[RMDB]
RNA sequence: GGGAACGACUCGAGUAGAGUCGAAAAGCGGAAACGCGAAUACUCUCUGACUCUCUCAAAAUAAAGACCUAGCAUCGAUGAAUGAGAGAGGAAGGAGAGGAGUAGUCGAUGCUAGGGAAAAUAAAAAGGGAUAAGAUAUGUUCGCAUAUCUUAUCCCAAAAGAAACAACAACAACAAC
Reactivity to 2A3 in 0.01 (KOAc 150mM, MgCl2 10mM, bicine 150mM(pH8.5), 24C), signal-to-noise 5, nucleotides 027 to 126: g000c000g040g030a090a060a020c020g010c020g010a020a030u140a070c010u020c000u000c090u180g210a060c000u010c010u020c000u000c000a020a040a050a040u300a050a120a040g110a070c000c000u010a000g000c000a000u000c000g030a020u040g030a100a070u100g000a010g000a000g020a010g010g010a060a090g140g020a020g010a040g010g000a050g030u020a010g000u010c000g000a000u000g000c000u000a000g010g000g010a010a010a000a020u270a030a090a000a040a030
Reactivity to DMS in 0.01 (KOAc 150mM, MgCl2 10mM, bicine 150mM(pH8.5), 24C), signal-to-noise 3, nucleotides 027 to 126: g000c010g020g020a060a090a160c000g000c000g010a110a170u020a180c050u000c000u000c000u030g020a290c020u000c000u010c000u070c020a050a030a100a080u070a030a020a090g010a170c000c000u000a050g010c040a020u000c000g030a000u010g010a130a070u010g010a000g000a040g020a020g010g000a140a080g020g010a050g000a000g000g000a120g000u010a110g010u010c020g010a030u000g020c000u020a020g000g000g020a100a040a070a080u020a030a060a080a190a100
Notes: An RNA of 177 nucleotides, treated with 2A3 and DMS and read out base by base. For 2A3, 7,956 sequencing reads were counted. For DMS the reverse transcriptase was MarathonRT. The DMS profile rests on 4,476 reads. 2A3 adducts were read by reverse transcription with SuperScript II with manganese. It was measured as part of the RMDB library OK1LIB.